This 207-nucleotide RNA was probed chemically with DMS and 2A3. Values cover nucleotides 27 to 156. For DMS the reverse transcriptase was MarathonRT. For 2A3 the reverse transcriptase was SuperScript II with manganese.

[RMDB]
RNA sequence: GGGAACGACUCGAGUAGAGUCGAAAAAGAAAAGCAAUCUUCAGCAAGGUGAUGACUUGUCCAAGGGAAGACAUGGUCGCCCUUGUUCCUUGGGAGAUUUUGUGCUCCCAGGGGAAAGCAUAAGCCCUCAGGAGCCAUGAUGAGAACAGCUGUAGAACUUACUUAAAGUGUUCGCACUUUAAGUAAGAAAAGAAACAACAACAACAAC
Reactivity to DMS in 0.01 (KOAc 150mM, MgCl2 10mM, bicine 150mM(pH8.5), 24C), signal-to-noise 2, nucleotides 027 to 156: a060g000a070a030a100a120g050c050a090a100u000c020u000u000c090a140g000c030a080a090g000g030u020g010a110u010g000a060c010u000u010g020u000c040c030a080a080g010g000g030a080a090g020a070c030a030u000g040g000u010c040g000c030c030c000u010u010g010u000u000c000c020u000u010g080g020g010a000g010a070u000u010u010u010g030u000g030c020u010c000c010c000a040g020g000g010g000a020a010a080g010c060a100u000a060a140g020c010c000c020u000c040a110g000g010a140g000c020c010a090u000g020a160u000g000a090g010a090a100c070a090g020c030u000g010u000a100g000a090a150
Reactivity to 2A3 in 0.01 (KOAc 150mM, MgCl2 10mM, bicine 150mM(pH8.5), 24C), signal-to-noise 6, nucleotides 027 to 156: a010g070a010a020a010a000g060c040a050a090u050c040u140u100c100a010g000c000a010a040g000g030u090g070a280u070g020a060c010u030u030g000u030c020c050a090a100g090g020g020a080a080g020a040c030a090u170g120g010u040c020g020c010c000c000u000u010g020u070u050c000c000u000u010g010g050g010a020g020a030u120u110u150u250g180u270g040c000u000c000c000c000a000g010g000g000g020a080a040a000g010c010a040u050a150a050g000c000c020c010u030c020a030g070g000a020g020c020c020a040u090g010a020u090g020a050g030a060a040c050a030g020c030u050g030u060a030g050a100a030